An RNA of 177 nucleotides, treated with 2A3 and read out base by base. The RNA was probed in 150 mM KOAc, 10 mM MgCl2 and 150 mM bicine (pH 8.5) at 24 C. Source: RMDB library OK1LIB, as collected in RNAgym.
RNA sequence: GGGAACGACUCGAGUAGAGUCGAAAACGAACUGGCGAAUAAAUAAUAAUAAAUUAGCUGCACGUUGUAAAGGUGGAUUCCGUCAAGCAGCGUGCAGCUAGAAUGACGGAAUGCACCUGCUAGUUCGGGUGGUACAUGCCUUCGGGCAUGUACCACCAAAAGAAACAACAACAACAAC
Reactivity to 2A3 in 0.01 (KOAc 150mM, MgCl2 10mM, bicine 150mM(pH8.5), 24C), signal-to-noise 1, nucleotides 027 to 126: c000g000a000a000c040u000g000g040c000g050a030a000u150a140a120a050u160a010a010u100a040a030u120a070a110a050u090u000a000g000c010u020g000c000a000c050g140u140u140g070u060a040a120a030g100g000u000g120g000a260u010u180c000c000g000u000c130a040a040g000c000a000g000c010g000u000g000c000a000g000c000u000a000g000a000a010u040g000a000c050g060g100a020a060u130g070c000a000c020c000u070g000c070u070a000g000u050u000c000g040